[RMDB]
RNA sequence: GGGAACGACUCGAGUAGAGUCGAAAAGAUAUGGAGAAGUCAGAGGACCUUGGAUUUAUACGUCGGAAACGACGUAUUGUCAGGUCUCUGAGCUUCUCCUAAGUCAAAAGGCAACUUCGGUUGCCAAGACUCAUUAGUUCUUCGGAACUAAUGAGUCAAAAGAAACAACAACAACAAC
Reactivity to 2A3 in 0.01 (KOAc 150mM, MgCl2 10mM, bicine 150mM(pH8.5), 24C), signal-to-noise 3, nucleotides 027 to 126: g020a010u100a030u170g000g000a010g000a000a000g010u000c010a000g010a090g070g280a170c010c030u110u220g120g000a030u050u300u040a030u030a010c000g000u000c000g000g010a080a120a060c020g010a000c020g010u000a000u000u000g000u000c000a010g000g020u000c000u000c010u000g000a000g010c000u000u000c000u000c000c000u000a010a000g000u000c020a000a010a090a130g000g000c010a010a010c020u110u170c300g170g000u010u010g000c010c000a000a000
Reactivity to DMS in 0.01 (KOAc 150mM, MgCl2 10mM, bicine 150mM(pH8.5), 24C), signal-to-noise 3, nucleotides 027 to 126: g000a040u010a300u010g000g000a020g020a020a020g000u000c000a010g010a030g020g010a040c010c010u000u010g030g010a010u010u010u010a020u010a000c000g000u010c000g000g010a100a060a230c000g020a000c000g010u000a000u000u000g000u000c010a030g000g010u000c000u000c000u000g000a080g000c010u000u010c000u000c000c000u000a020a060g000u000c060a100a090a170a130g000g010c000a000a010c010u010u000c210g020g000u000u000g010c000c010a060a060

About this RNA: An RNA of 177 nucleotides, treated with 2A3 and DMS and read out base by base. 2A3 adducts were read by reverse transcription with SuperScript II with manganese. As a SHAPE reagent, 2A3 marks flexible, mostly unpaired nucleotides at the ribose 2'-OH. The RNA was probed in 150 mM KOAc, 10 mM MgCl2 and 150 mM bicine (pH 8.5) at 24 C. Source: RMDB library TTRDES, as collected in RNAgym. For DMS, 3,331 sequencing reads were counted. For 2A3, 6,072 sequencing reads were counted.